The record gives the reactivity of an RNA of 177 nucleotides to DMS and 2A3. The RNA was probed in 150 mM KOAc, 10 mM MgCl2 and 150 mM bicine (pH 8.5) at 24 C. The data come from the RNA Mapping Database (RMDB), library OK2TRN. 2A3 adducts were read by reverse transcription with SuperScript II with manganese.
[RMDB]
RNA sequence: GGGAACGACUCGAGUAGAGUCGAAAAAGUGAUCCAUCCACCUCAGCCUCCCAAGUGCUGGGAUUACAGGCAUGAGCCACUGCACCUGGCCUUUACAUGUCUUUCGUGUGAGUUUAAUUCACUUAACUAACACGCAAGAAUUCGUUCUUGCGUGUUAAAAAGAAACAACAACAACAAC
Reactivity to DMS in 0.01 (KOAc 150mM, MgCl2 10mM, bicine 150mM(pH8.5), 24C), signal-to-noise 4, nucleotides 027 to 126: a040g020u000g000a030u010c030c020a080u010c020c030a060c050c030u010c020a050g010c020c080u010c030c030c050a090a070g010u010g010c030u000g020g000g000a050u000u000a040c130a070g010g010c010a030u000g010a150g010c030c030a040c050u010g010c080a060c060c060u000g010g000c020c070u000u010u000a140c090a060u000g000u000c060u000u000u000c090g000u010g010u000g010a030g030u010u000u010a070a110u010u000c080a030c040u010u000a060a080c190
Reactivity to 2A3 in 0.01 (KOAc 150mM, MgCl2 10mM, bicine 150mM(pH8.5), 24C), signal-to-noise 2, nucleotides 027 to 126: a000g050u040g010a000u040c000c010a060u030c020c000a020c020c000u040c000a000g000c030c010u040c000c000c020a080a040g080u130g100c010u010g030g000g030a010u030u120a030c000a030g050g000c030a030u060g050a000g060c000c020a070c040u130g040c060a070c040c040u010g020g000c000c020u160u200u110a080c010a030u010g040u040c000u050u100u130c130g020u040g010u040g020a070g040u100u180u100a080a100u120u030c020a010c040u080u020a060a010c050